This 177-nucleotide RNA was probed chemically with DMS and 2A3. DMS adducts were read by reverse transcription with MarathonRT. The DMS profile rests on 1,676 reads. The 2A3 profile rests on 1,393 reads.
[RMDB]
RNA sequence: GGGAACGACUCGAGUAGAGUCGAAAAGUGUGGAGAUGCAAUGAUGAAUCUCCCAAUUCUAAAACACAUCAGUGAAGCAUUAAAUUUAGAAGUACGCGUGUUCCAUAGAGAUGAUGAUACAAAACUGCACAACGUAACGUUUCGACGUUACGUUGUGAAAAGAAACAACAACAACAAC
Reactivity to DMS in 0.01 (KOAc 150mM, MgCl2 10mM, bicine 150mM(pH8.5), 24C), signal-to-noise 3, nucleotides 027 to 126: g010u020g030u020g050g000a030g020a020u000g020c050a150a160u010g000a210u010g010a090a020u000c010u010c000c000c060a050a090u010u010c030u010a060a090a070a060c080a070c020a030u000c040a110g010u000g010a080a100g050c020a040u010u000a060a070a080u010u010u020a060g000a080a110g020u000a060c110g010c100g030u000g010u000u010c010c030a100u010a070g000a120g000a070u000g000a070u000g000a080u000a030c170a030a020a050a090c170u000g010
Reactivity to 2A3 in 0.01 (KOAc 150mM, MgCl2 10mM, bicine 150mM(pH8.5), 24C), signal-to-noise 2, nucleotides 027 to 126: g100u090g080u170g020g010a000g000a050u040g030c110a090a100u290g070a150u110g020a150a000u050c000u000c010c000c000a010a030u000u000c010u090a020a020a110a020c060a020c000a060u070c000a000g140u020g070a060a000g020c000a070u090u220a080a090a100u060u140u040a070g020a130a020g040u060a030c060g060c060g060u030g030u050u000c020c020a020u070a020g070a000g010a040u120g010a020u070g020a000u020a140c060a030a100a060a020c040u080g060